Structure probing data (2A3 and DMS) for a 170-nucleotide construct. The reactions ran in a buffer of 150 mM KOAc, 10 mM MgCl2 and 150 mM bicine (pH 8.5), at 24 C. For DMS, 7,253 sequencing reads were counted. For DMS the reverse transcriptase was MarathonRT. Values cover nucleotides 27 to 129.
RNA sequence: GGGAACGACUCGAGUAGAGUCGAAAAUGACAUGGAUUCUGGUGUGUCAUCCUUUAGUGAACUACUUUUUGAUUGCGUUGAUCUUUCAGUAGCUUCUACCUAUUUUUUAGUCCGCAUCUUGCAAGAUAUAGUGAACGCUUCGGCGUUCACAAAAGAAACAACAACAACAAC
Reactivity to 2A3 in 0.01 (KOAc 150mM, MgCl2 10mM, bicine 150mM(pH8.5), 24C), signal-to-noise 4, nucleotides 027 to 129: u090g000a050c000a000u070g070g070a140u160u150c020u100g100g040u070g010u010g010u110c000a050u070c000c000u080u060u150a090g020u030g010a030a000c000u040a020c020u040u020u000u020u020g090a050u010u050g070c120g080u040u150g010a000u040c000u000u020u010c010a000g000u020a020g040c050u040u000c000u020a110c040c020u020a140u030u070u010u030u010u070a050g050u020c000c000g010c050a030u010c020u030u100g030c020a080a020g060a030u030a010u060a110
Reactivity to DMS in 0.01 (KOAc 150mM, MgCl2 10mM, bicine 150mM(pH8.5), 24C), signal-to-noise 3, nucleotides 027 to 129: u000g000a050c020a000u020g000g020a170u020u050c080u040g050g070u010g000u030g040u010c030a000u040c020c030u010u020u120a130g030u040g050a070a060c060u020a030c030u020u010u000u000u060g050a040u040u050g060c020g030u080u070g030a130u010c060u020u010u050c040a030g040u050a030g030c170u000u080c000u060a120c140c020u040a000u000u010u110u080u000u080a090g040u110c000c000g000c090a040u030c040u040u040g030c000a010a010g040a060u010a030u040a070